[RMDB]
RNA sequence: GGGAACGACUCGAGUAGAGUCGAAAAUAAACAUGGCACUUGUUGUACUACAAGGGACAGAUUUUAUCGCUUGGCAAAUGAGUGUGCUCAGGUGCUAAGCGAAUAUGUUCUAUGUGGUGGUGGUUACGAGCACAACUGUUCGCAGUUGUGAAAAGAAACAACAACAACAAC
Reactivity to DMS in 0.01 (KOAc 150mM, MgCl2 10mM, bicine 150mM(pH8.5), 24C), signal-to-noise 6, nucleotides 027 to 129: u060a060a080a090c110a100u000g010g030c060a120c050u000u000g040u040u020g040u000a110c070u000a050c080a060a300g040g000g020a000c050a000g000a160u050u050u050u060a030u000c000g020c020u040u000g010g030c000a030a050a040u030g020a000g040u040g050u030g040c000u010c020a020g010g010u030g000c020u030a000a000g030c000g020a030a050u000a060u020g000u000u000c000u030a150u000g020u030g030g040u000g040g000u030g010g000u000u000a060c060g020a000g030
Reactivity to 2A3 in 0.01 (KOAc 150mM, MgCl2 10mM, bicine 150mM(pH8.5), 24C), signal-to-noise 9, nucleotides 027 to 129: u120a000a070a010c070a120u080g070g000c040a010c100u030u040g000u040u040g050u140a040c020u020a010c020a110a190g040g000g010a000c010a030g110a100u020u060u070u220a180u070c000g000c000u000u000g000g000c010a000a000a080u020g000a010g020u250g060u270g190c000u000c000a010g020g010u010g000c000u000a000a000g000c000g010a000a000u030a010u010g010u000u000c020u010a070u100g020u010g010g020u030g000g060u050g010g030u060u060a080c090g020a020g030

The record gives the reactivity of an RNA of 170 nucleotides to DMS and 2A3. Reactivities are given for positions 27 through 129. The data come from the RNA Mapping Database (RMDB), library 15KLIB.